[RMDB]
Conditions: 150 mM KOAc, 10 mM MgCl2 and 150 mM bicine (pH 8.5), 24 C.
The record gives the reactivity of an RNA of 177 nucleotides to DMS.
For DMS, 639 sequencing reads were counted.
RNA sequence: GGGAACGACUCGAGUAGAGUCGAAAAAAAGUGUACGAAAGAACAAAGAAGCAAUCAAACCGAGUAGUGAAAUGAUGGCUUCAGUCCAAAAUGGGCAAACAGUACAGACGGAGCCAAAGGCAAUUAAAUACUCCCAUUUCUUCGGAAAUGGGAGUAUAAAAGAAACAACAACAACAAC
Reactivity to DMS in 0.01 (KOAc 150mM, MgCl2 10mM, bicine 150mM(pH8.5), 24C), signal-to-noise 1, nucleotides 027 to 126: a080a010a000g000u000g030u000a040c070g030a060a120a140g000a050a000c100a100a180a040g010a010a010g060c050a030a010u000c040a030a140a260c060c030g040a140g080u000a100g000u000g000a110a060a120u000g030a080u010g000g030c030u000u000c030a010g060u000c040c060a040a050a130a090u010g000g010g000c000a030a090a030c080a100g000u010a110c100a030g000a110c070g030g000a140g010c060c010a100a090a100g000g000c110a030a010u000u000a000a000
Notes: Values cover nucleotides 27 to 126.